[RMDB]
The record gives the reactivity of an RNA of 177 nucleotides to DMS. The reactions ran in a buffer of 150 mM KOAc, 10 mM MgCl2 and 150 mM bicine (pH 8.5), at 24 C. For DMS the reverse transcriptase was MarathonRT.
RNA sequence: GGGAACGACUCGAGUAGAGUCGAAAAGAUAUGGAAGGUAGACAUGAUGGAGUGUCGGAAACGACAUGACAUCAACAGCUACUUCCUAAGUCAAACGAGGAGUCGCUGUUCGCAGCGACUCCUCGAACCCAUUGCCUAUGUUCGCAUAGGCAAUGGGAAAAGAAACAACAACAACAAC
Reactivity to DMS in 0.01 (KOAc 150mM, MgCl2 10mM, bicine 150mM(pH8.5), 24C), signal-to-noise 1, nucleotides 027 to 126: g000a080u020a300u010g000g000a020a000g020g000u000a010g010a050c020a200u020g010a000u020g000g000a300g000u000g000u000c000g040g000a120a030a250c000g010a030c020a010u000g000a210c000a000u000c010a000a020c300a100g000c040u010a000c010u000u000c000c000u000a090a130g000u000c000a080a110a160c010g030a000g000g020a010g000u000c020g070c000u000g020u020u030c200g000c000a000g060c030g080a010c000u000c000c000u000c000g000a010a020
Source: RMDB library TTRDEL, as collected in RNAgym.